[RMDB]
Structure probing data (DMS) for a 177-nucleotide construct. Reactivities are rounded to 0.1 and cut off at 0 and 3.
RNA sequence: GGGAACGACUCGAGUAGAGUCGAAAAUUGCAAACGGACAUUUGUGCCUGCAAGGGGCCGCAAAUUGCGAACACGGCCCUUUUUCCACCCGGGCUGUCGCCGUCCAUUCGGCGUAUGACAUUACACCAAAUAGGAUCCACUUCGGUGGAUCCUAUUUAAAAGAAACAACAACAACAAC
Reactivity to DMS in 0.01 (KOAc 150mM, MgCl2 10mM, bicine 150mM(pH8.5), 24C), signal-to-noise 1, nucleotides 027 to 126: u010u010g000c040a080a150a160c160g000g010a080c020a160u010u050u000g010u020g010c020c010u010g020c090a040a060g040g000g020g020c010c030g020c100a060a060a080u010u010g000c090g010a040a100c200a170c000g030g010c000c000c000u000u000u010u000u020c020c020a210c060c000c110g010g010g050c020u000g020u000c020g020c010c060g020u000c150c210a080u010u000c030g030g020c060g010u000a040u000g000a090c080a110u000u000a030c100a030c130c080